Chemical mapping of a 207-nucleotide RNA with 2A3. Values cover nucleotides 27 to 156. 2A3 adducts were read by reverse transcription with SuperScript II with manganese.
[RMDB]
RNA sequence: GGGAACGACUCGAGUAGAGUCGAAAAGUACAAAAUUGAUUCGGCGGCCCUGUCAUGAGGCCGAAACGAAGGCACGUACCCCUUCGAAUGGCGUCGGGGAGUCAGCGGCUAUAUAUGCGCCUAAUGCUAAAGUCGUGCUGGUUCGCCAGCACGACAAGCCCUAAAGACUGUUCGCAGUCUUUAGGGCAAAAGAAACAACAACAACAAC
Reactivity to 2A3 in 0.01 (KOAc 150mM, MgCl2 10mM, bicine 150mM(pH8.5), 24C), signal-to-noise 1, nucleotides 027 to 156: g100u040a030c030a020a210a120a160u090u130g050a110u060u040c060g040g030c010g020g040c020c010c020u050g140u110c120a120u130g040a030g080g000c000c010g010a000a000a000c010g000a000a000g010g000c060a030c200g120u180a140c000c000c000c000u020u060c030g050a060a110u130g010g010c060g020u030c030g010g000g000g080a040g090u040c010a010g070c020g080g000c030u030a020u030a020u030a010u300g080c020g030c010c000u080a060a020u120g010c080u070a060a100a000g010u000c000g000u010g000c000u010g040g020u010u020c000g000c090c000a000g040c010a000c010g000a000c000a010a000
It was measured as part of the RMDB library M2RFPK.